Chemical mapping of a 177-nucleotide RNA with DMS.
RNA sequence: GGGAACGACUCGAGUAGAGUCGAAAAGAUAUGGAGGGUACCAUACACACGUAUAUUGUCAGCUCCCUACGUCGGAAACGACGUAGGAGCUUGGAUUUAUAUAUGUGGUAUGGUACCCUCCUAAGUCGUAUAAGUCUUGGUUCGCCAAGACUUAUACAAAAGAAACAACAACAACAAC
Reactivity to DMS in 0.01 (KOAc 150mM, MgCl2 10mM, bicine 150mM(pH8.5), 24C), signal-to-noise 2, nucleotides 027 to 126: g010a090u010a300u010g000g010a020g000g010g020u000a010c000c000a000u000a010c000a150c010a010c000g020u000a010u000a010u000u010g010u000c000a030g020c010u000c150c050c040u010a000c000g000u000c000g010g010a180a110a260c000g010a010c000g020u000a010g010g010a010g000c000u010u010g010g000a010u010u020u000a000u000a000u000a000u010g000u000g000g000u000a000u010g000g000u000a000c000c000c000u000c000c000u010a010a050g010u010c110